This 177-nucleotide RNA was probed chemically with DMS and 2A3.
2A3 adducts were read by reverse transcription with SuperScript II with manganese.
RNA sequence: GGGAACGACUCGAGUAGAGUCGAAAACGGAAAGAACCAUCGUUGAGGAUGCCAGCGAGUUUCGCUACGAGUUCGAGGACCUCAUAGACGAUAAGACCCUCGUGAUCGCCAUAACCCAGAGCGGCGAGCGAUGGAUGAGUUUCGACUCAUCCAUCGCAAAAGAAACAACAACAACAAC
Reactivity to DMS in 0.01 (KOAc 150mM, MgCl2 10mM, bicine 150mM(pH8.5), 24C), signal-to-noise 2, nucleotides 027 to 126: c080g000g010a070a160a070g000a130a060c090c030a060u010c010g020u000u000g010a090g000g000a080u000g010c040c040a080g010c020g040a110g000u000u000u000c030g050c090u000a050c120g010a080g020u010u010c050g010a170g010g010a140c110c000u000c050a050u000a230g010a140c030g010a030u000a050a090g000a200c070c040c030u000c040g030u000g020a110u000c020g000c020c000a120u000a080a060c030c010c070a120g000a170g010c240g000g000c020g010a040
Reactivity to 2A3 in 0.01 (KOAc 150mM, MgCl2 10mM, bicine 150mM(pH8.5), 24C), signal-to-noise 2, nucleotides 027 to 126: c030g030g000a180a020a040g060a100a010c000c020a020u040c000g000u040u100g010a030g040g010a070u120g140c050c010a060g060c110g080a040g040u030u170u190c050g000c040u100a070c140g010a000g050u000u070c030g000a050g060g000a030c000c000u010c010a030u090a060g080a030c060g000a020u030a080a030g050a030c030c010c000u000c000g040u070g060a090u020c010g020c010c030a070u060a110a060c000c000c000a000g020a020g090c050g020g000c000g000a020
About this RNA: Values are in units of 0.01, from 0 to 300, in steps of 10. The data come from the RNA Mapping Database (RMDB), library OK2TST.